[RMDB]
RNA sequence: GGGAACGACUCGAGUAGAGUCGAAAACAUUGAUAAGAGCUUGGUCUAUUGGUGUUAAAGUCUCAGGUGCUGAUUUUUUCACCAUGUUUUGCACAGCAGCACUAGCUUCAUCUAAUAAAUCGAUAGCUGAAUCAGGGAGAUUUUUACUGGUUAAAUACCAUAUACCCGGGUUCGCCCGGGUAUAUGGAAAAGAAACAACAACAACAAC
Reactivity to 2A3 in 0.01 (KOAc 150mM, MgCl2 10mM, bicine 150mM(pH8.5), 24C), signal-to-noise 2, nucleotides 027 to 156: c000a040u060u130g040a010u020a170a020g020a000g040c010u030u030g050g070u040c050u110a040u030u100g010g040u000g020u020u040a030a030a080g010u020c010u010c140a050g030g140u020g000c040u040g020a130u040u030u000u000u030u100c080a060c000c030a020u010g100u030u040u010u140g010c030a020c000a060g050c030a000g000c010a000c040u010a040g000c010u080u060c010a060u020c020u060a030a070u020a140a120a000u080c020g090a100u110a060g000c030u020g030a070a020u040c000a070g000g050g030a050g020a050u040u000u010u090u190a030c070u030g000g300u300u300a300a060a100u300a070